This 207-nucleotide RNA was probed chemically with 2A3.

[RMDB]
RNA sequence: GGGAACGACUCGAGUAGAGUCGAAAAUUCGAAGGUCGUGCAUGCGAAAGGAUGGUCUAAUCUGGAUGGGAAAGCAUGCUUCAUACGAUGCUCAAGCUCCAUCCGAAACGUACGUAGGAUGGUUGGAUGGGAAAGCAUGCACGCCAUCCGAAACGUACAGUCUGUCACUGUUCGCAGUGACAGACUGAAAAGAAACAACAACAACAAC
Reactivity to 2A3 in 0.01 (KOAc 150mM, MgCl2 10mM, bicine 150mM(pH8.5), 24C), signal-to-noise 1, nucleotides 027 to 156: u080u030c000g000a090a070g070g010u120c000g000u010g000c030a040u010g000c000g100a080a000a000g120g000a030u090g040g010u020c020u170a020a060u010c090u190g000g000a020u070g000g000g060a100a050a070g010c000a030u040g060c010u060u090c060a110u090a190c100g080a030u200g080c030u090c020a050a060g030c000u000c000c000a020u010c000c000g040a020a060a000c150g040u150a000c010g000u050a120g070g020a140u050g010g120u060u030g040g000a120u060g040g000g050a000a000a010g000c000a000u000g000c000a000c010g000c000c000a000u000c010c030g010a020a020a020c120g020u050a020
The data come from the RNA Mapping Database (RMDB), library OK3TST.